[RMDB]
RNA sequence: GGGAACGACUCGAGUAGAGUCGAAAAUUGAUCCUCAAAAAGCUUAUCUCGAUUUCGUCAAUGCGGGAGGUGCCCCAUUGACAAAUUGUGUUAAGAUGCUUACUCCUAAAACUGGUACAGGUAUAGCUAAGUAAUGGCUUCGGCCAUUACAAAAGAAACAACAACAACAAC
Reactivity to 2A3 in 0.01 (KOAc 150mM, MgCl2 10mM, bicine 150mM(pH8.5), 24C), signal-to-noise 9, nucleotides 027 to 129: u050u090g040a020u010c000c010u070c030a030a020a010a040a040g030c020u040u040a010u040c040u010c020g010a010u000u020u040c080g000u010c010a000a000u030g020c210g020g010g030a170g190g120u300g100c000c000c000c000a000u010u000g000a000c000a000a010a010u000u010g010u000g000u020u010a010a000g020a010u110g010c000u040u050a020c040u070c040c000u080a110a120a060a070c090u120g070g020u120a060c020a040g000g010u050a060u080a050g020c020u050a120a040
Reactivity to DMS in 0.01 (KOAc 150mM, MgCl2 10mM, bicine 150mM(pH8.5), 24C), signal-to-noise 5, nucleotides 027 to 129: u020u040g020a050u010c050c030u050c100a010a070a050a040a070g030c020u010u030a000u010c000u010c000g020a030u000u000u000c220g050u020c020a020a040u010g050c110g000g000g000a240g040g050u090g030c010c000c020c010a020u030u030g020a030c010a030a030a010u000u040g010u030g020u000u000a010a020g020a090u050g000c040u030u000a140c090u050c050c050u000a020a020a030a030c130u000g030g010u080a070c070a030g020g010u040a050u060a000g030c070u030a060a140

The record gives the reactivity of an RNA of 170 nucleotides to 2A3 and DMS. The RNA was probed in 150 mM KOAc, 10 mM MgCl2 and 150 mM bicine (pH 8.5) at 24 C. The 2A3 profile rests on 22,496 reads. The data come from the RNA Mapping Database (RMDB), library 15KLIB. For DMS the reverse transcriptase was MarathonRT. 2A3 adducts were read by reverse transcription with SuperScript II with manganese.